[RMDB]
RNA sequence: GGGAACGACUCGAGUAGAGUCGAAAAGAUAUGGACGAAAGCUCGAUAAGAGCAUGUCGGAAACGACAUAGCUCUUUUGACGAGCUGAGUCCUAAGUCAAAUCGUCGUAAGUUCGCUUACGACGAAAGUAUCUCGACCUGUUCGCAGGUCGAGAUACAAAAGAAACAACAACAACAAC
Reactivity to 2A3 in 0.01 (KOAc 150mM, MgCl2 10mM, bicine 150mM(pH8.5), 24C), signal-to-noise 1, nucleotides 027 to 126: g000a030u020a010u070g000g010a000c010g030a090a010a000g000c000u010c020g120a190u100a300a030g010a000g100c000a000u010g000u000c000g000g040a020a000a010c000g000a000c010a000u030a040g000c000u050c000u000u080u110u270g210a080c010g000a010g000c000u000g020a000g000u010c000c000u000a020a010g000u020c020a010a000a200u020c010g020u000c000g000u000a000a010g020u050u190c280g050c210u000u000a000c000g010a000c000g010a000a000a000
Reactivity to DMS in 0.01 (KOAc 150mM, MgCl2 10mM, bicine 150mM(pH8.5), 24C), signal-to-noise 2, nucleotides 027 to 126: g020a030u000a160u000g000g000a010c000g010a130a070a010g020c000u000c000g010a170u000a010a030g010a010g000c000a020u000g020u010c000g000g020a020a040a050c010g030a010c010a000u000a150g020c000u010c000u000u010u010u000g000a150c090g020a020g040c000u000g000a300g000u000c000c000u010a010a060g000u000c030a110a090a110u000c000g020u000c010g000u000a000a000g020u000u010c260g020c000u000u010a000c000g000a000c000g000a010a020a050